[RMDB]
RNA sequence: GGGAACGACUCGAGUAGAGUCGAAAAAUAGAUGAAUGGCAUAGAGGUGUUAGAAAACAUGAGACAAAAGUAAUCUUCUUGAUGCUAGCGUCUCAGGUAAUUAGCAGGUACUAGACAGUACCUGCUACCAGAUGUAACUUUUCGAAGUUACAUCUGGAAAAGAAACAACAACAACAAC
Reactivity to DMS in 0.01 (KOAc 150mM, MgCl2 10mM, bicine 150mM(pH8.5), 24C), signal-to-noise 9, nucleotides 027 to 126: a080u010a070g010a070u000g010a080a060u010g010g010c040a050u010a060g010a100g010g020u000g010u000u000a070g000a100a060a060a050c050a050u000g000a010g000a010c010a030a300a110a020g000u000a020a050u000c010u000u030c210u010u010g010a010u000g000c010u000a020g000c300g000u000c000u000c010a020g000g010u010a050a080u030u000a000g010c000a000g010g010u000a010c010u000a110g020a110c250a070g010u000a000c000c000u000g000c000u000a000
Reactivity to 2A3 in 0.01 (KOAc 150mM, MgCl2 10mM, bicine 150mM(pH8.5), 24C), signal-to-noise 9, nucleotides 027 to 126: a000u110a020g080a050u080g050a090a060u080g040g020c050a040u070a070g090a050g030g050u060g040u120u060a070g090a050a110a010a010c050a050u040g000a000g010a000c010a000a040a010a000g020u120a190a190u020c030u250u030c040u110u300g000a000u000g010c000u000a010g010c000g010u000c000u000c000a000g010g000u060a070a130u100u030a000g000c000a000g000g000u000a000c000u030a070g140a250c090a060g000u000a000c000c000u000g000c000u000a000